[RMDB]
RNA sequence: GGGAACGACUCGAGUAGAGUCGAAAAGAUAUGGACUGCGUAGGAUAGAGCAACAGCUACCAUUCGGAAACGAAUGUGUAGACAUGCUCCUGUCCUAAGUCAAAACUCGUAACUUCGGUUACGAGAAUCGUAUCUAGUCCUUCGGGACUAGAUACGAAAAAGAAACAACAACAACAAC
Reactivity to 2A3 in 0.01 (KOAc 150mM, MgCl2 10mM, bicine 150mM(pH8.5), 24C), signal-to-noise 2, nucleotides 027 to 126: g110a050u160a070u300g100g010a050c020u110g100c300g150u140a000g020g030a010u010a040g010a000g000c010a020a110c070a160g030c000u010a020c000c000a000u030u020c020g050g020a060a060a040c030g000a000a000u040g160u070g000u050a000g050a020c010a020u040g000c000u040c000c070u020g030u100c000c000u020a030a030g010u030c000a000a080a010a150c020u000c000g000u000a000a000c000u080u070c300g210g000u030u000a000c000g010a020g020a010a070
Reactivity to DMS in 0.01 (KOAc 150mM, MgCl2 10mM, bicine 150mM(pH8.5), 24C), signal-to-noise 2, nucleotides 027 to 126: g000a150u020a060u000g010g020a040c040u000g040c300g020u010a020g010g000a030u010a010g030a020g000c000a030a050c200a210g000c000u000a000c010c000a030u000u000c000g000g000a060a060a130c010g000a000a010u000g000u030g040u010a000g000a030c070a190u000g000c000u000c120c040u000g030u000c010c000u010a070a030g030u010c040a070a060a080a200c000u000c000g010u000a020a000c000u000u030c210g000g010u000u000a000c000g000a000g000a040a020